This 177-nucleotide RNA was probed chemically with 2A3. High 2A3 reactivity points to a flexible backbone, as in loops and unpaired stretches. It was measured as part of the RMDB library OK1LIB. Conditions: 150 mM KOAc, 10 mM MgCl2 and 150 mM bicine (pH 8.5), 24 C.
RNA sequence: GGGAACGACUCGAGUAGAGUCGAAAAGAGGCCGGCCAGCUCACCUGGUUCGCUUUGACCAGCAUCGGGCAGAUCGCGCACGCGCUGCGCUACUACCGCAAGGAGACGCUGCGGCUGAUCGCCCAGAGCUCCUCGGCAUCUUCGGAUGCCGAGGAGCAAAAGAAACAACAACAACAAC
Reactivity to 2A3 in 0.01 (KOAc 150mM, MgCl2 10mM, bicine 150mM(pH8.5), 24C), signal-to-noise 1, nucleotides 027 to 126: g050a020g040g000c000c070g000g000c010c030a000g020c000u060c040a050c030c030u000g000g000u040u040c040g000c040u090u020u140g030a070c050c000a000g040c020a140u130c130g000g000g000c010a000g030a050u000c000g040c010g000c060a030c120g120c000g030c080u050g030c020g010c040u100a120c030u020a060c000c000g040c070a070a090g060g030a040g000a000c020g030c000u020g000c040g020g000c000u020g000a030u070c010g020c000c000c000a010g010a020